[RMDB]
RNA sequence: GGGAACGACUCGAGUAGAGUCGAAAAGAAGGCACUUUCGAGUGCCUUCAUGGGGAGCUCAGGUCUCCCUGCCUUGCAAACUCCCUAAGGGAGGAGACCUAAUUAGGUGCACUUUCGAGUGCACCAAUCUUAUGUGGUGAUUCGUCACCACAUAAGAAAAAGAAACAACAACAACAAC
Reactivity to 2A3 in 0.01 (KOAc 150mM, MgCl2 10mM, bicine 150mM(pH8.5), 24C), signal-to-noise 5, nucleotides 027 to 126: g010a000a010g010g000c020a000c020u050u070u190c260g110a010g000u000g010c000c000u000u000c000a000u000g000g000g000g010a040g010c050u070c210a030g050g040u010c000u020c020c000c000u020g120c000c000u030u040g050c090a090a060a190c030u050c010c010c000u110a120a130g020g010g000a020g000g020a020g020a020c010c020u060a070a130u160u170a080g000g000u000g010c000a000c000u060u090u070c250g070a000g000u000g000c010a000c000c000a010a000
Reactivity to DMS in 0.01 (KOAc 150mM, MgCl2 10mM, bicine 150mM(pH8.5), 24C), signal-to-noise 5, nucleotides 027 to 126: g010a020a010g000g020c000a000c000u000u000u020c180g020a010g010u000g000c000c010u000u010c000a030u000g000g000g000g000a140g010c120u000c190a030g010g000u000c000u000c020c020c030u010g010c000c010u000u010g030c140a060a080a170c110u000c010c000c030u020a080a070g010g000g010a070g010g000a040g010a010c000c010u010a120a110u010u010a100g020g020u000g000c000a020c000u000u000u000c160g010a020g000u000g000c010a000c000c010a020a030
An RNA of 177 nucleotides, treated with 2A3 and DMS and read out base by base. For DMS the reverse transcriptase was MarathonRT. The reactions ran in a buffer of 150 mM KOAc, 10 mM MgCl2 and 150 mM bicine (pH 8.5), at 24 C. The DMS profile rests on 5,963 reads.